[RMDB]
RNA sequence: GGGAACGACUCGAGUAGAGUCGAAAACAAGUUGGCUUCGGCCAACUUGAAAAGAAUGGUAGACUGACACCGCUAAACUCAGAUAACCAAAAAUAGCGGAAAAAAGAUCAGUGUUCGCACUGAUCAACUGUGGAUUAUUCUUCGGAAUAAUCCACAGAAAAGAAACAACAACAACAAC
Reactivity to DMS in 0.01 (KOAc 150mM, MgCl2 10mM, bicine 150mM(pH8.5), 24C), signal-to-noise 1, nucleotides 027 to 126: c010a000a010g010u000u000g000g020c000u000u010c220g030g020c030c000a000a000c010u000u030g010a060a030a170a090g000a090a050u000g000g020u000a060g010a100c030u000g000a080c200a060c030c010g000c020u000a000a050a080c110u000c000a030g030a130u000a160a170c030c030a010a030a040a030a140u000a000g000c020g010g020a000a020a030a090a100a050g000a000u000c010a040g010u000g020u000u000c300g010c000a000c000u000g040a010u000c000a030a040
Reactivity to 2A3 in 0.01 (KOAc 150mM, MgCl2 10mM, bicine 150mM(pH8.5), 24C), signal-to-noise 1, nucleotides 027 to 126: c010a000a010g000u010u010g000g040c010u060u150c300g060g000c000c000a000a010c000u000u000g000a000a000a000a020g110a040a110u100g090g060u120a040g070a160c020u030g020a000c060a070c160c010g020c000u040a130a110a000c020u010c030a010g010a190u130a090a030c020c000a010a060a000a000a020u020a010g000c020g000g000a070a020a040a000a050a000g000a000u000c000a000g010u010g070u050u030c200g010c070a000c000u000g010a000u000c010a000a020